Source: RMDB library OK1LIB, as collected in RNAgym. This 177-nucleotide RNA was probed chemically with DMS and 2A3. DMS (dimethyl sulfate) methylates the pairing face of unpaired adenines and cytosines. As a SHAPE reagent, 2A3 marks flexible, mostly unpaired nucleotides at the ribose 2'-OH. 2A3 adducts were read by reverse transcription with SuperScript II with manganese.
[RMDB]
RNA sequence: GGGAACGACUCGAGUAGAGUCGAAAAAGGGCAGACCGGUCACGGUUAUUGGCCACCAAAAGGGUAAAGAUACUAAAGACAACAUUGCCCGCAAUUUUGGAAUGCCCCAUCCGGAGGGGUACCGGAAAUCACUAUAGUCAUUCGUGACUAUAGUGAUAAAAGAAACAACAACAACAAC
Reactivity to DMS in 0.01 (KOAc 150mM, MgCl2 10mM, bicine 150mM(pH8.5), 24C), signal-to-noise 7, nucleotides 027 to 126: a100g010g020g010c000a070g010a040c020c020g020g000u030c300a090c080g010g010u000u010a080u010u020g000g020c010c010a210c020c020a020a010a040a060g000g000g020u000a010a020a070g010a130u020a090c120u040a080a150a110g010a160c210a070a110c110a110u010u000g000c000c000c000g010c220a080a150u010u000u030u010g010g010a110a060u010g000c070c000c010c150a130u020c010c010g000g000a060g010g010g010g030u030a010c000c010g000g000a060a110
Reactivity to 2A3 in 0.01 (KOAc 150mM, MgCl2 10mM, bicine 150mM(pH8.5), 24C), signal-to-noise 9, nucleotides 027 to 126: a000g040g010g000c020a010g010a030c020c020g050g070u260c150a070c170g020g020u040u020a110u130u130g100g030c000c000a020c000c010a020a020a000a020g050g010g010u070a130a150a020g080a070u090a090c040u140a160a120a070g100a060c060a090a010c020a130u170u130g010c010c000c000g030c080a170a260u020u020u020u050g030g020a120a070u130g040c000c000c000c020a050u010c000c010g000g020a070g010g120g010g060u030a040c000c000g000g000a020a110
The RNA was probed in 150 mM KOAc, 10 mM MgCl2 and 150 mM bicine (pH 8.5) at 24 C.